[RMDB]
RNA sequence: GGGAACGACUCGAGUAGAGUCGAAAACAGGUACUGUCUCUAGCAGCACAUGGAUUCAAACAUGGAAUGGAAAAUGAUCUUUUCCCCAUGCUUGCACUUUGGGAAGGCCAUUCUAUUCUCAGCAGGAGCUACUUUAUGCUUUUUAGAGCAAAAAUGCACUAUCGCCACUUUUCGAAGUGGCGAUAGUAAAAGAAACAACAACAACAAC
Reactivity to 2A3 in 0.01 (KOAc 150mM, MgCl2 10mM, bicine 150mM(pH8.5), 24C), signal-to-noise 2, nucleotides 027 to 156: c020a000g050g010u020a000c060u250g010u030c010u080c000u010a010g000c010a000g040c000a000c010a080u080g040g000a090u100u140c060a040a030a020c010a020u030g050g030a140a050u040g040g000a050a030a020a050u130g050a100u090c050u000u010u010u010c000c000c020c000a000u010g010c030u050u060g030c040a060c100u020u030u070g010g000g050a030a020g050g000c000c000a030u070u030c060u060a220u130u010c020u030c040a060g020c030a010g020g090a010g000c010u030a020c000u120u150u110a140u150g010c040u000u000u110u100u210a100g030a010g070c010a020a070a000a040a060u160g020c060